[RMDB]
RNA sequence: GGGAACGACUCGAGUAGAGUCGAAAAAACACGUGGGUACGGCCCAGUGGGGGGGAGAGGGACACGCCCUGGGCUCAGCCCAGGGUGCAGCCGGACUGACUGAGCCCCUGUGCCGCCCCCAGAUAAAUAAAUUCCCAUGAUUCGUCAUGGGAAUUUAAAAAGAAACAACAACAACAAC
Reactivity to DMS in 0.01 (KOAc 150mM, MgCl2 10mM, bicine 150mM(pH8.5), 24C), signal-to-noise 2, nucleotides 027 to 126: a070a030c040a050c100g040u000g030g010g000u020a090c100g010g000c020c010c010a100g000u000g040g010g030g010g000g030g000a160g010a100g020g020g000a030c050a300c090g000c010c000c010u000g000g000g060c000u000c230a070g000c010c000c010a000g000g010g000u000g000c030a010g000c020c040g040g010a140c140u020g000a070c050u000g000a300g020c010c000c030c010u020g000u010g010c000c010g000c130c020c000c000c010a020g000a100u000a060a060a080